RNA sequence: GGGAACGACUCGAGUAGAGUCGAAAAGAUAUGGAGGAUCAGGUGGACAUGCACCGGAUCGGAAACGAUCCGAGGUGCAACAGCCACUGAUCCUCCUAAGUCACGGGGAUACCUUCGGGUAUCCCAACACAUAUGAGAGGUUCGCCUCUCAUAUGUGAAAAGAAACAACAACAACAAC
Reactivity to DMS in 0.01 (KOAc 150mM, MgCl2 10mM, bicine 150mM(pH8.5), 24C), signal-to-noise 6, nucleotides 027 to 126: g010a030u000a300u010g000g000a010g010g010a010u000c000a040g010g020u000g010g010a080c170a190u010g010c000a010c000c010g000g000a010u000c000g000g000a050a050a090c020g020a010u000c000c000g020a090g030g020u000g020c010a030a080c230a190g010c000c000a020c000u000g000a010u000c000c000u000c000c000u000a000a050g000u000c020a190c300g000g000g000g010a010u000a010c000c000u000u010c240g010g010g010u000a000u000c000c000c000a020a020
Reactivity to 2A3 in 0.01 (KOAc 150mM, MgCl2 10mM, bicine 150mM(pH8.5), 24C), signal-to-noise 5, nucleotides 027 to 126: g010a000u030a010u090g000g000a010g000g000a000u010c030a040g130g250u130g080g040a120c140a300u140g000c000a010c000c020g000g000a000u000c010g010g000a030a030a010c000g000a000u010c020c010g040a100g030g110u020g020c010a040a050c060a050g100c000c000a000c000u010g000a000u010c000c000u010c000c000u000a010a000g000u000c010a010c140g060g000g000g000a010u010a010c000c000u070u140c300g090g000g000u010a000u020c000c000c000a000a010